[RMDB]
RNA sequence: GGGAACGACUCGAGUAGAGUCGAAAAGAUAUGGAUGGUUAGAUCUUUUGACGUGCAUCGGAAACGAUGUGAACGAUAAGAUCGACCAUCCUAAGUCAAAACGUUUAGAAGUUCGCUUCUAAACGAAGGUAAGAUAUGACUUCGGUCAUAUCUUACCAAAAGAAACAACAACAACAAC
Reactivity to 2A3 in 0.01 (KOAc 150mM, MgCl2 10mM, bicine 150mM(pH8.5), 24C), signal-to-noise 6, nucleotides 027 to 126: g030a020u070a030u140g010g000a010u010g000g060u050u070a270g030a020u040c020u050u170u080u150g300a110c010g020u040g000c000a000u000c000g020g040a070a050a050c010g010a010u010g010u020g040a050a000c000g010a040u010a080a010g000a010u000c000g000a000c000c000a000u000c000c000u000a010a000g000u000c010a010a020a110a140c010g000u000u000u000a020g000a020a020g010u070u250c300g050c130u000u000c000u030a010a000a000c010g030a080a010
Reactivity to DMS in 0.01 (KOAc 150mM, MgCl2 10mM, bicine 150mM(pH8.5), 24C), signal-to-noise 5, nucleotides 027 to 126: g000a040u000a300u000g000g000a010u000g010g000u000u010a100g010a020u010c000u000u010u000u000g010a110c060g020u000g000c000a000u000c000g010g000a130a100a210c010g020a020u000g000u000g010a100a030c000g000a200u000a010a010g010a010u000c000g010a020c010c000a000u000c000c000u000a010a060g000u000c050a110a100a110a210c010g000u000u000u000a010g000a010a020g020u000u010c300g010c010u000u000c000u000a010a000a010c010g010a030a040